[RMDB]
RNA sequence: GGGAACGACUCGAGUAGAGUCGAAAAGUAGAGUCUGCAUCGCAAUACGUCUAGACUAGACAAUAACAACUUAUGAGAUGACACUUCUGAAACUGCUAUAAAUCGUUGGACAAGGUUUAAUAACACCACGGAAGUACACGUUCGCGUGUACUUCCGUAAAAGAAACAACAACAACAAC
Reactivity to DMS in 0.01 (KOAc 150mM, MgCl2 10mM, bicine 150mM(pH8.5), 24C), signal-to-noise 1, nucleotides 027 to 126: g000u000a070g100a300g000u000c000u000g010c020a010u010c020g060c030a070a140u000a140c300g000u000c010u000a100g000a090c170u000a060g000a000c080a240a140u000a010a070c210a080a020c170u000u060a090u000g010a090g000a010u000g000a210c010a000c020u000u030c010u000g000a130a020a090c110u000g000c080u000a100u000a010a080a060u000c050g000u000u000g000g020a050c130a000a140g010g000u000u000u000a110a080u020a050a110c290a050c060c050